[RMDB]
RNA sequence: GGGAACGACUCGAGUAGAGUCGAAAAACGAGGGACUCGGUGAAAUUGAAUUGGCUGUAAAGAUGCGGCCUACCCGUAGCAGGACGAAAAGACCCCGUGGAGCUUUACUAUAGUCUGGCAUUGGGAUUCGGGUUUCUCUGCGUAGGAUAGGUGGGAGCUAUUUUACGCACUUCGGUGCGUAAAAUAGAAAAGAAACAACAACAACAAC
Reactivity to 2A3 in 0.01 (KOAc 150mM, MgCl2 10mM, bicine 150mM(pH8.5), 24C), signal-to-noise 1, nucleotides 027 to 156: a020c030g000a030g010g040g020a020c050u020c030g030g020u020g060a080a080a070u150u130g050a100a100u100u130g030g010c030u000g010u070a100a240a000g130a170u150g060c000g000g000c000c000u000a040c010c000c010g010u010a010g060c020a000g010g050a020c040g050a000a080a030a030g040a050c010c030c000c040g030u090g000g080a040g030c040u100u110u090a150c040u100a050u050a150g020u040c000u040g020g100c010a080u030u100g030g020g000a020u060u060c020g000g000g000u010u110u030c030u000c030u040g030c030g050u110a020g000g020a020u070a020g000g000u040g020g020g000a010g000